[RMDB]
RNA sequence: GGGAACGACUCGAGUAGAGUCGAAAAGGGCCGGCAUGUAUAUCUUGAACAUGGCUCGACUCAAACGAUCCUUCCCCGAAGGUAUGGUCGAUAUGGUCGAGGUAGCUCAGGCGAUCAAAUACGUAUCCGAGAAUCAGAAGGAUCUCAAACCGCAAUAGAAUAUAAGCCGGUUCGCCGGCUUAUAUUCAAAAGAAACAACAACAACAAC
Reactivity to 2A3 in 0.01 (KOAc 150mM, MgCl2 10mM, bicine 150mM(pH8.5), 24C), signal-to-noise 2, nucleotides 027 to 156: g040g000g000c070c040g020g040c030a020u050g080u040a100u040a090u300c120u060u110g090a040a010c020a060u040g100g000c060u020c140g010a020c020u040c020a090a020a150c060g020a050u030c010c000u000u030c020c020c020c070g090a030a010g000g000u040a030u080g070g060u070c010g010a000u040a090u150g000g020u000c010g010a060g040g080u140a010g000c020u020c130a060g100g000c010g010a010u020c020a000a190a050u160a010c090g020u040a040u090c030c010g110a080g040a100a130u060c000a010g010a060a000g030g010a000u010c010u040c040a040a030a010c000c040g140c110a120a070u250a230